[RMDB]
RNA sequence: GGGAACGACUCGAGUAGAGUCGAAAAGAUAUGGAAUCGCCAGGGAGAUCUGUAUCGGAAACGAUACUGAUCAUCGAUCUGGCGAUUCCUAAGUCAAAACAGAGUUCGCCCUUCGGGGCGAACUCUGCAUAUGUAAAUUCUUCGGAAUUUACAUAUGAAAAGAAACAACAACAACAAC
Reactivity to DMS in 0.01 (KOAc 150mM, MgCl2 10mM, bicine 150mM(pH8.5), 24C), signal-to-noise 1, nucleotides 027 to 126: g010a010u000a100u010g010g010a010a010u000c000g020c000c000a010g000g000g010a110g000a020u000c000u000g000u000a010u000c000g020g000a020a030a040c000g020a000u000a000c000u000g000a000u000c000a270u000c300g010a090u010c000u000g000g000c000g000a000u000u000c000c000u000a000a080g000u000c000a120a130a130a290c010a000g000a020g020u010u000c000g000c000c020c050u000u020c240g020g040g000g010c030g020a010a000c000u000c000u000g000